[RMDB]
RNA sequence: GGGAACGACUCGAGUAGAGUCGAAAAAUUUUCAUAGUUGAAAUUAUGAGAUUAAUUGAAGCGAGUGCGGGAUGGUGGAUGCGCACUGCUCAGGAGUCCCAUACCGGGACGAAUCGGCCGUCCAGUGGCGUACUGGGGAUUUCGAUCCCCAGUACGCAAAAGAAACAACAACAACAAC
Reactivity to 2A3 in 0.01 (KOAc 150mM, MgCl2 10mM, bicine 150mM(pH8.5), 24C), signal-to-noise 1, nucleotides 027 to 126: a000u000u000u030u000c000a000u000a030g080u040u290g110a100a260a000u170u070a000u000g000a000g000a040u000u300a190a090u300u300g000a130a010g090c100g000a000g060u010g010c080g000g000g070a030u040g000g070u100g070g240a170u290g130c050g050c000a000c000u000g000c000u010c000a040g060g060a000g210u000c070c060c000a030u110a140c000c300g030g000g070a000c000g040a080a040u010c010g070g000c000c000g000u070c000c000a100g000u250g130